RNA sequence: GGGAACGACUCGAGUAGAGUCGAAAAGGGAGGUUGGUGGUGGACGAGCCACUCGCCAACCGGGUCAGGUCCGGAAGGAAGCAGCCCUAACGAGCCAGGCACGGGUCGCCGUGCCAGCCUCCCACCUUUUAAAGAAGUGCAACUUCGGUUGCACUUCCAUCCAUUAUUUCUUCGGAAAUAAUGGAUGAAAAGAAACAACAACAACAAC
Reactivity to 2A3 in 0.01 (KOAc 150mM, MgCl2 10mM, bicine 150mM(pH8.5), 24C), signal-to-noise 3, nucleotides 027 to 156: g020g000g010a020g030g010u010u020g020g050u120g030g000u010g020g050a030c040g000a010g020c010c020a060c010u000c000g020c020c040a050a050c100c070g000g000g000u110c010a000g010g010u000c020c000g050g140a090a070g030g000a030a000g000c000a000g010c000c000c020u010a020a000c020g010a000g100c160c290a170g010g000c020a010c040g040g020g150u040c000g010c010c000g010u050g030c000c000a000g010c000c010u140c080c030c010a040c010c010u040u070u010u150a060a060a010g000a000a000g000u000g000c000a000a000c010u030u110c220g060g000u000u000g010c000a000c000u000u010c000
Reactivity to DMS in 0.01 (KOAc 150mM, MgCl2 10mM, bicine 150mM(pH8.5), 24C), signal-to-noise 1, nucleotides 027 to 156: g000g040g000a040g010g010u000u010g030g020u000g020g040u010g020g000a130c040g030a140g000c000c040a070c010u000c000g000c030c030a100a150c070c170g020g000g000u020c130a300g030g000u000c020c000g010g060a180a300g040g010a050a020g020c020a300g010c040c000c000u010a220a080c020g010a050g000c020c040a180g050g030c000a070c050g000g000g010u000c090g040c030c000g020u030g010c010c000a020g000c010c010u000c000c000c000a170c040c000u000u000u000u010a040a120a070g000a000a010g000u000g000c030a000a000c020u000u010c270g060g010u000u000g030c000a000c010u000u010c000